[RMDB]
RNA sequence: GGGAACGACUCGAGUAGAGUCGAAAAGGGUGAGACCUAGGAACCAUAGGGGUAUUCUCAAAGGAAGCUUUUGCAGUGACGCCCAUGUAAGUGGGAUAUAACAACAGAACUCGUAUGAGUAGCCUAAUAAAUCGGACCUUCUUCGGAAGGUCCGAAAUCUAAUAGCCUGGUUCGCCAGGCUAUUAGAAAAAGAAACAACAACAACAAC
Reactivity to DMS in 0.01 (KOAc 150mM, MgCl2 10mM, bicine 150mM(pH8.5), 24C), signal-to-noise 2, nucleotides 027 to 156: g000g010g060u020g000a140g030a070c030c010u000a170g000g020a130a070c010c040a140u010a090g000g000g020g050u010a090u010u000c040u010c060a090a160a140g020g020a100a070g010c030u000u000u000u000g010c020a100g010u000g010a100c130g000c010c060c050a000u010g020u020a060a190g020u000g010g000g010a060u010a090u010a170a090c060a060a050c040a020g010a040a050c030u000c020g010u000a100u000g010a060g010u010a140g000c010c000u010a020a110u010a050a090a150u000c000g050g000a010c020c000u010u000c010u000u000c290g060g030a050a000g000g000u010c000c010g000a000a010a010
Reactivity to 2A3 in 0.01 (KOAc 150mM, MgCl2 10mM, bicine 150mM(pH8.5), 24C), signal-to-noise 1, nucleotides 027 to 156: g010g010g000u090g040a050g030a050c020c070u070a070g060g020a000a070c040c020a000u060a000g070g030g000g020u050a060u060u040c010u000c030a040a110a000g110g010a130a000g070c020u110u040u060u060g030c090a020g000u010g040a000c040g000c020c000c010a020u090g110u090a210a130g000u000g020g000g020a000u000a010u040a100a030c070a000a000c010a030g030a030a020c010u000c060g030u120a040u110g020a010g030u070a010g010c000c000u030a100a020u130a100a130a030u080c030g000g000a000c000c000u010u090c000u040u030c180g070g020a010a000g000g000u020c000c000g000a000a000a000
Source information:
Chemical mapping of a 207-nucleotide RNA with DMS and 2A3. The DMS profile rests on 2,261 reads. 2A3 is a SHAPE reagent: it acylates the 2'-hydroxyl of flexible nucleotides of all four kinds. It was measured as part of the RMDB library M2RFPK. For 2A3, 535 sequencing reads were counted.